[RMDB]
RNA sequence: GGGAACGACUCGAGUAGAGUCGAAAAAACUGGGAACUUUGGAAGCUUGUCAGGAAUCGAUAGUGAGCCCUGAAGAAGUGUAGUUUUGAGUGCCCAGGAUCAGCAGGUGAAAUGGUCCUGGCUUCCAGAGUAUGUGCUAGUCCAACAGUGCAAAGAGACGUACUCAUGAUUUCGAUCAUGAGUACGUAAAAGAAACAACAACAACAAC
Reactivity to DMS in 0.01 (KOAc 150mM, MgCl2 10mM, bicine 150mM(pH8.5), 24C), signal-to-noise 2, nucleotides 027 to 156: a060a000c030u000g010g010g020a110a060c030u000u000u010g020g000a030a120g040c020u000u000g030u000c050a030g010g000a030a040u010c030g020a180u020a150g030u020g000a080g020c090c010c010u000g000a080a080g000a050a060g020u000g010u000a070g010u000u010u000u020g010a130g040u010g000c020c010c020a030g000g020a070u020c020a050g010c120a180g020g040u000g010a070a070a110u010g000g000u000c030c010u000g000g010c000u000u070c020c000a100g010a060g030u000a070u000g020u000g090c020u000a080g020u000c050c010a050a090c080a080g010u000g000c060a040a050a130g010a230g030
Reactivity to 2A3 in 0.01 (KOAc 150mM, MgCl2 10mM, bicine 150mM(pH8.5), 24C), signal-to-noise 2, nucleotides 027 to 156: a000a000c080u090g040g010g020a050a010c020u020u040u020g040g010a050a010g000c010u030u040g050u070c020a010g030g010a090a030u030c030g040a110u140a150g220u210g070a020g020c050c000c010u010g020a060a020g050a070a000g030u050g020u140a080g020u010u040u120u260g160a080g030u050g010c010c000c000a000g000g010a010u020c010a000g140c000a010g040g160u130g060a050a090a050u010g000g000u000c000c010u000g010g010c000u010u050c000c000a000g020a000g010u080a100u140g030u030g030c020u030a030g060u060c020c000a010a030c010a120g010u070g020c030a040a100a000g080a040g010
The record gives the reactivity of an RNA of 207 nucleotides to DMS and 2A3. For 2A3 the reverse transcriptase was SuperScript II with manganese. High 2A3 reactivity points to a flexible backbone, as in loops and unpaired stretches. Source: RMDB library OK3TST, as collected in RNAgym. Conditions: 150 mM KOAc, 10 mM MgCl2 and 150 mM bicine (pH 8.5), 24 C.